[RMDB]
RNA sequence: GGGAACGACUCGAGUAGAGUCGAAAAGAAAGAAAGAAAGAAAUUUAUGAAGUCCUAUUCACGCGCGAUAGGAUAAACUUCAUAAAGAUCGUGUAUGUGCUAACGCACAUACACGAAUGCGCAUGCAGAACUGCAUGCAUGAACAUAGCGCGUGCAAGAUAUCCGGUCCAUUCGUGGACCGGAUAUCAAAAGAAACAACAACAACAAC
Reactivity to 2A3 in 0.01 (KOAc 150mM, MgCl2 10mM, bicine 150mM(pH8.5), 24C), signal-to-noise 1, nucleotides 027 to 156: g000a020a040a000g120a020a110a000g010a040a110a010g090a080a190a100u080u080u030a020u000g000a010a010g000u010c010c000u000a000u030u030c090a000c040g010c000g000c020g010a000u000a000g000g010a000u070a110a030a020c000u000u020c000a000u010a000a010a000g010a020u000c000g000u070g010u050a000u000g010u000g000c120u210a180a010c160g000c000a000c020a000u000a000c000a000c000g000a000a000u020g000c000g020c000a000u010g000c010a010g030a300a040c160u040g000c000a000u000g080c000a010u080g090a040a070c080a190u060a030g000c000g000c000g000u020g000c000a020a020

Conditions: 150 mM KOAc, 10 mM MgCl2 and 150 mM bicine (pH 8.5), 24 C. The record gives the reactivity of an RNA of 207 nucleotides to 2A3.